[RMDB]
RNA sequence: GGGAACGACUCGAGUAGAGUCGAAAAGAUAUGGAUGUCACGUAUCAGCAGCAACAGCUCGGAAACGAGACAUGCUGGUAUGACAUCCUAAGUCAAACAUUGUCCGACGUUCGCGUCGGACAAUGAAGUAUUUAAACGUCUUCGGACGUUUAAAUACAAAAGAAACAACAACAACAAC
Reactivity to 2A3 in 0.01 (KOAc 150mM, MgCl2 10mM, bicine 150mM(pH8.5), 24C), signal-to-noise 2, nucleotides 027 to 126: g030a020u060a050u160g000g010a010u010g020u000c010a000c280g010u010a000u010c000a000g010c010a000g000c060a050a200c030a230g020c010u020c000g030g090a080a080a050c010g010a000g020a030c010a030u050g010c000u010g010g000u030a010u060g000a000c000a000u000c010c000u010a140a010g060u000c030a160a040a070c010a010u010u010g020u000c010c000g010a020c000g010u050u090c300g000c010g100u000c000g040g000a000c000a000a000u000g000a000a010
Reactivity to DMS in 0.01 (KOAc 150mM, MgCl2 10mM, bicine 150mM(pH8.5), 24C), signal-to-noise 5, nucleotides 027 to 126: g000a040u010a300u010g000g000a010u000g000u000c010a120c300g020u010a010u000c000a010g000c020a020g020c200a080a110c300a120g000c010u000c000g000g010a070a080a170c010g010a010g000a040c130a070u010g010c000u000g010g010u000a020u000g000a010c000a000u010c000c000u000a020a060g010u010c020a130a120a240c000a000u000u000g000u000c000c000g010a010c000g010u010u010c260g030c000g010u000c000g000g000a000c000a000a000u000g000a050a080

The record gives the reactivity of an RNA of 177 nucleotides to 2A3 and DMS. For DMS the reverse transcriptase was MarathonRT. Conditions: 150 mM KOAc, 10 mM MgCl2 and 150 mM bicine (pH 8.5), 24 C. Values cover nucleotides 27 to 126. The DMS profile rests on 4,722 reads.